Conditions: 150 mM KOAc, 10 mM MgCl2 and 150 mM bicine (pH 8.5), 24 C. This 207-nucleotide RNA was probed chemically with DMS and 2A3. It was measured as part of the RMDB library OK3TST. DMS adducts were read by reverse transcription with MarathonRT. For 2A3, 2,286 sequencing reads were counted.

RNA sequence: GGGAACGACUCGAGUAGAGUCGAAAACUGGGAGCGAAACAGCUGGCGGUGCCUCAGCCCCUCUUUCCUCCCAAGGAAGCGCAUUGUUAUUAACUGGGAAUUCUUUAUAGCCGGGCUGGAGGAAGUUUUGGCUGUAAACUGUCAUGCACUGCAGCCAUAAAUAUACUGAUUUCGAUCAGUAUAUUUAAAAAGAAACAACAACAACAAC
Reactivity to DMS in 0.01 (KOAc 150mM, MgCl2 10mM, bicine 150mM(pH8.5), 24C), signal-to-noise 3, nucleotides 027 to 156: c060u010g010g010g010a100g020c060g020a090a050a050c060a070g020c040u000g020g030c050g020g020u000g040c030c050u000c030a120g020c010c020c050c060u000c030u000u000u000c020c010u000c000c010c030a070a080g000g000a070a100g030c090g030c040a120u000u010g010u000u000a120u000u010a050a080c060u000g000g020g020a090a120u000u000c050u010u000u000a090u000a140g010c010c060g030g030g050c000u000g000g020a070g010g000a030a050g010u000u010u010u010g030g020c010u000g000u000a300a030a080c020u000g020u010c130a090u010g000c030a070c050u000g010c010a040g020c000c020a200
Reactivity to 2A3 in 0.01 (KOAc 150mM, MgCl2 10mM, bicine 150mM(pH8.5), 24C), signal-to-noise 4, nucleotides 027 to 156: c030u030g010g000g010a030g030c110g030a020a050a050c040a060g010c050u040g060g000c010g020g040u090g070c030c030u020c030a010g000c000c000c010c000u010c010u040u020u020c000c010u010c020c010c000a000a010g050g020a040a020g030c020g020c070a070u060u160g040u100u190a110u180u130a170a040c060u030g000g000g070a060a040u130u030c020u040u230u080a170u170a130g040c040c040g010g010g000c020u030g020g050a020g000g030a030a040g000u020u050u130u120g000g020c000u000g000u000a100a140a110c020u050g080u200c030a060u160g000c050a010c030u030g000c010a000g000c000c000a010